[RMDB]
RNA sequence: GGGAACGACUCGAGUAGAGUCGAAAAAACACGGACCCACUAGGUGCAGGUACCUUGCUGGGUGAUGAGCCAUGGCACGGGGGGAGCCAUGAAGCGAUGAAGCGGGGACCCCAGAAGGACAGCCUGGUCUGAAAGCUAGAUUCGUCUAGCUUUCAGAAAAAGAAACAACAACAACAAC
Reactivity to DMS in 0.01 (KOAc 150mM, MgCl2 10mM, bicine 150mM(pH8.5), 24C), signal-to-noise 4, nucleotides 027 to 126: a060a040c100a120c120g020g000a160c010c010c010a130c080u010a040g020g000u000g010c100a080g000g000u010a090c020c010u000u000g010c050u000g020g010g020u010g000a080u000g000a250g000c040c010a010u000g000g010c000a060c110g000g000g000g000g000g000a300g000c010c010a010u010g010a120a050g010c090g010a140u010g010a080a090g010c060g000g000g000g000a220c190c000c000c000a030g000a080a060g000g010a050c070a140g010c010c010u010g000g010
Reactivity to 2A3 in 0.01 (KOAc 150mM, MgCl2 10mM, bicine 150mM(pH8.5), 24C), signal-to-noise 1, nucleotides 027 to 126: a000a000c100a000c030g050g040a020c000c020c020a000c060u050a030g120g000u100g130c040a030g120g000u150a120c000c000u020u120g160c040u010g010g020g010u050g000a070u060g050a010g000c000c010a010u020g000g020c000a000c150g070g000g010g000g000g000a010g020c010c000a000u020g040a080a000g000c030g060a070u090g020a090a020g040c020g020g030g000g010a030c000c000c020c020a000g000a000a000g030g020a040c020a000g000c040c000u000g000g080